[RMDB]
RNA sequence: GGGAACGACUCGAGUAGAGUCGAAAAGGCAGGACUUACCAAGUCUGGGGGCCGAUGAGGGUUGGCUCAAAGUAGGGUUUUGACUUCAAAACUCAAGCUGUGACCCCAAAACGAUGGAGGUAAAUGAAAAAUCCAUCUGCCUUCGGGCAGAUGGAAAGGAUAAUACCAUCUUCGGAUGGUAUUAUCCAAAAGAAACAACAACAACAAC
Reactivity to 2A3 in 0.01 (KOAc 150mM, MgCl2 10mM, bicine 150mM(pH8.5), 24C), signal-to-noise 2, nucleotides 027 to 156: g060g030c050a010g020g010a020c020u050u070a090c060c050a020a050g030u010c030u040g000g010g000g060g080c040c110g040a040u090g050a110g010g010g030u080u020g020g010c040u040c070a060a070a030g060u110a050g010g000g000u010u010u010u030g080a090c030u110u040c240a010a000a010a010c010u010c040a050a000g000c040u040g010u070g120a050c000c000c000c020a010a040a040a030c050g070a050u060g020g040a060g030g050u090a050a090a110u200g100a030a100a040a020a010u030c000c000a000u000c000u010g010c000c000u020u030c080g030g000g020c020a010g000a000u010g000g010a000a000a000
Reactivity to DMS in 0.01 (KOAc 150mM, MgCl2 10mM, bicine 150mM(pH8.5), 24C), signal-to-noise 1, nucleotides 027 to 156: g020g050c020a070g000g020a100c020u000u000a070c030c060a090a180g030u010c020u000g020g010g040g040g070c050c040g040a070u020g030a050g010g010g020u020u010g020g030c060u000c010a040a060a020g030u000a100g000g010g030u000u000u000u050g020a210c160u020u000c050a010a030a020a040c010u010c010a070a070g020c020u000g030u000g000a200c000c030c000c030a010a060a100a050c010g000a100u010g000g000a080g030g010u000a010a130a100u010g020a010a070a090a070a190u000c000c000a000u000c000u020g000c000c000u000u000c300g010g010g030c000a000g000a010u010g000g000a000a000a080